[RMDB]
About this RNA
This 177-nucleotide RNA was probed chemically with DMS and 2A3. 2A3 adducts were read by reverse transcription with SuperScript II with manganese. The DMS profile rests on 2,163 reads. The 2A3 profile rests on 1,378 reads.
RNA sequence: GGGAACGACUCGAGUAGAGUCGAAAAACACACAGUAAGACAAUACCGCUGAAGGAAACUGGAGAGCUGCUUGAACUGUGAAACUGGAAGGGUCAAGUGCGUAAUGCUGCUUGUAAAACAAUUGUGGUGAUUCGUACAUGUUCGCAUGUACGAAUCAAAAAGAAACAACAACAACAAC
Reactivity to DMS in 0.01 (KOAc 150mM, MgCl2 10mM, bicine 150mM(pH8.5), 24C), signal-to-noise 3, nucleotides 027 to 126: a100c130a070c120a070c060a030g010u000a040a080g010a090c080a080a080u000a100c090c030g000c050u000g000a130a110g010g000a090a060a090c090u000g000g010a080g010a080g020c030u000g010c040u000u000g000a090a050c080u000g020u010g000a050a080a070c040u000g010g050a070a080g020g000g010u000c010a040a030g010u000g000c050g020u000a090a030u020g010c030u000g030c030u000u010g010u000a030a040a080a060c090a040a130u010u010g030u010g030g000
Reactivity to 2A3 in 0.01 (KOAc 150mM, MgCl2 10mM, bicine 150mM(pH8.5), 24C), signal-to-noise 2, nucleotides 027 to 126: a000c020a020c010a000c030a020g050u130a130a020g070a000c030a070a040u050a130c020c020g000c080u070g030a060a000g030g040a040a090a010c040u060g050g030a070g010a010g070c040u050g000c010u090u040g060a030a050c020u000g040u040g140a090a040a000c040u020g050g060a040a000g010g000g000u030c010a010a030g020u010g060c010g040u110a100a050u160g020c030u040g030c000u060u000g110u250a020a050a070a000c030a030a150u070u100g050u050g020g100

The reactions ran in a buffer of 150 mM KOAc, 10 mM MgCl2 and 150 mM bicine (pH 8.5), at 24 C. DMS adducts were read by reverse transcription with MarathonRT.